[RMDB]
RNA sequence: GGGAACGACUCGAGUAGAGUCGAAAAUGGGCACAUGUGGUUUGGGAAUCUUGUGACGAUGUCGUGGUGGGACGACCUGUGGCUGAACGAGGGGUUUGCGACGUGGGUGUCGUUCAAGGGGAUGGAGCCACCUCUGUGGUUUCGACCACAGAGGUGGAAAAGAAACAACAACAACAAC
Reactivity to DMS in 0.01 (KOAc 150mM, MgCl2 10mM, bicine 150mM(pH8.5), 24C), signal-to-noise 1, nucleotides 027 to 126: u050g000g020g030c080a010c070a060u040g020u040g010g000u020u020u020g000g020g000a040a060u000c030u000u010g050u020g000a120c140g100a080u010g000u010c020g000u030g010g090u000g020g000g000a190c020g010a040c070c000u030g000u010g000g060c000u010g000a080a100c130g000a070g000g000g000g000u020u010u060g010c060g000a070c090g000u100g000g010g010u020g020u000c040g000u000u050c070a060a160g000g030g040g030a070u000g000g000a070g020
Reactivity to 2A3 in 0.01 (KOAc 150mM, MgCl2 10mM, bicine 150mM(pH8.5), 24C), signal-to-noise 3, nucleotides 027 to 126: u090g000g040g000c050a080c010a040u110g070u060g050g140u110u100u040g070g010g010a050a080u030c020u040u110g040u170g080a030c080g050a080u120g010u060c020g040u030g100g020u080g030g080g000a010c000g000a000c000c010u060g000u040g080g010c000u090g020a080a020c070g020a080g000g030g080g000u060u180u110g090c050g010a040c050g000u150g050g000g010u140g020u020c000g000u030u080c040a040a020g000g000g000g020a040u090g020g030a020g020
Overview:
Source: RMDB library OK1LIB, as collected in RNAgym. This 177-nucleotide RNA was probed chemically with DMS and 2A3. The reactions ran in a buffer of 150 mM KOAc, 10 mM MgCl2 and 150 mM bicine (pH 8.5), at 24 C. The DMS profile rests on 1,902 reads.